[RMDB]
RNA sequence: GGGAACGACUCGAGUAGAGUCGAAAAUACCAAAAACACAGGACUCUGCAUAAGCCGCGAGGCGACGUAUAGGGUCUGACGCCUGCCCGGUGCCGGAAGGUCACGCGGAGGUGUUAGCGCGAGCGAACCUCCGUUACAGGUUCGCCUGUAACGGAGGAAAAGAAACAACAACAACAAC
Reactivity to DMS in 0.01 (KOAc 150mM, MgCl2 10mM, bicine 150mM(pH8.5), 24C), signal-to-noise 3, nucleotides 027 to 126: u020a280c000c010a060a050a110a090a070c100a110c140a210g000g000a050c020u010c010u000g030c050a030u000a120a260g010c010c000g000c300g000a180g010g010c010g030a060c300g000u000a030u000a040g000g000g030u000c010u000g000a070c060g000c030c000u000g000c220c000c020g010g030u010g020c020c010g010g040a130a100g000g000u010c050a040c000g020c090g030g000a060g000g020u000g000u010u000a060g010c020g000c140g030a190g010c020g010a090a160
Reactivity to 2A3 in 0.01 (KOAc 150mM, MgCl2 10mM, bicine 150mM(pH8.5), 24C), signal-to-noise 1, nucleotides 027 to 126: u070a000c010c000a000a000a000a100a000c110a000c020a030g050g000a020c000u010c010u050g010c030a050u040a190a060g010c010c010g010c040g030a050g000g000c010g020a030c110g040u050a040u100a120g030g000g010u000c010u000g010a000c000g000c000c000u120g060c100c000c000g030g020u030g000c010c010g100g090a160a060g030g040u150c030a010c020g210c040g020g040a020g020g000u010g020u030u050a030g010c040g000c040g030a040g000c030g020a030a050